The data come from the RNA Mapping Database (RMDB), library OK3TST. Chemical mapping of a 207-nucleotide RNA with 2A3. Reactivities are given for positions 27 through 156. For 2A3, 1,098 sequencing reads were counted.

[RMDB]
RNA sequence: GGGAACGACUCGAGUAGAGUCGAAAACAAAAGGUGUCAGAGGACCUGAAACCUAAAAACGGUGAGCAGCAAUUCUGGCAUCACAACAAUACUUAAAUUUCAAGCAUGAACUGAAGUUUUAUUUCUGCAAUCUUCACUUGCUACACACAAUACCCUAACCCUAAAUGCCAUUCGUGGCAUUUAGGGUAAAAGAAACAACAACAACAAC
Reactivity to 2A3 in 0.01 (KOAc 150mM, MgCl2 10mM, bicine 150mM(pH8.5), 24C), signal-to-noise 3, nucleotides 027 to 156: c060a020a120a010a060g010g010u000g000u010c000a000g000a040g050g030a060c010c000u000g040a090a060a010c020c020u160a230a160a050a010a000c140g030g030u060g030a100g230c000a000g040c010a010a050u010u000c000u010g000g000c000a000u000c010a010c010a020a030c040a070a110u210a120c060u150u270a130a090a140u240u230u110c050a040a030g000c010a030u080g010a210a110c100u040g000a050a020g020u070u090u070u260a100u110u160u080c080u120g100c050a040a100u020c000u030u020c020a020c050u010u030g000c040u050a010c030a000c020a020c020a130a080u100a250c000c040c020u020a010